[RMDB]
RNA sequence: GGGAACGACUCGAGUAGAGUCGAAAAUCGACGUUCGCGUCGAAAAAAAACCUUUGUGACACCCAAGAGGCGAUAAGUUGAGAGGACCCAUUGGGUCCUCGUAACUUUUGACGCCUCGACGGUGUCACUCUGGUAAAAACGUCAGUUCGCUGACGAAGGUGACAUAUCAGUUCGCUGAUAUGUCACCAAAAGAAACAACAACAACAAC
Reactivity to 2A3 in 0.01 (KOAc 150mM, MgCl2 10mM, bicine 150mM(pH8.5), 24C), signal-to-noise 2, nucleotides 027 to 156: u010c000g000a000c000g020u020u160c230g000c020g080u020c020g090a060a010a000a000a000a010a010a020c000c020u000u000u010g000u000g000a010c000a010c000c000c030a050a010g000a000g000g000c010g020a030u010a090a000g010u030u020g070a020g000a020g130g000a000c040c000c140a300u230u300g010g000g000u000c000c000u000c010g000u010a000a000c000u000u050u010u030g130a060c050g000c000c000u000c000g000a000c000g010g000u010g010u000c000a000c010u000c000u000g020g000u080a150a040a000a000a000c010g010u010c000a010g000u060u130c200g000c150u010g000a000c010g100a030a110

Structure probing data (2A3) for a 207-nucleotide construct.